[RMDB]
RNA sequence: GGGAACGACUCGAGUAGAGUCGAAAACCUUCGAGGGGGUUCACACCUCCAACCUGCGGGCCGGCUACUCUUCUUUUCCUUUCCUCGUCAUCCUGGGUCAACCUCUUAAGUUCCUCUUCCUCCUCCUCUAAGACAAUGAGUUCGCUCAUUGUCUUAGAAAAGAAACAACAACAACAAC
Reactivity to DMS in 0.01 (KOAc 150mM, MgCl2 10mM, bicine 150mM(pH8.5), 24C), signal-to-noise 2, nucleotides 027 to 126: c010c000u000u010c110g020a190g030g000g000g010g040u000u000c230a100c160a100c030c010u000c010c050a110a080c070c030u000g000c070g000g010g020c030c020g000g000c020u010a060c060u010c040u000u000c050u010u010u010u000c010c010u000u000u000c030c020u000c060g020u000c040a060u000c040c040u000g010g020g010u000c040a080a130c050c030u000c010u000u000a070a140g010u000u000c020c000u010c050u000u000c000c010u000c010c000u000c010c030u010
Reactivity to 2A3 in 0.01 (KOAc 150mM, MgCl2 10mM, bicine 150mM(pH8.5), 24C), signal-to-noise 1, nucleotides 027 to 126: c010c020u050u060c120g070a120g020g050g000g000g000u070u100c060a020c010a020c130c020u000c020c000a030a060c000c030u070g000c010g000g030g070c000c030g020g040c020u030a040c000u050c000u070u050c000u050u060u050u090c000c000u030u030u050c010c010u060c000g050u050c020a050u050c020c040u050g070g000g000u030c020a040a070c020c010u050c010u070u070a080a050g010u030u010c010c010u030c000u000u010c010c000u020c020c000u050c000c000u000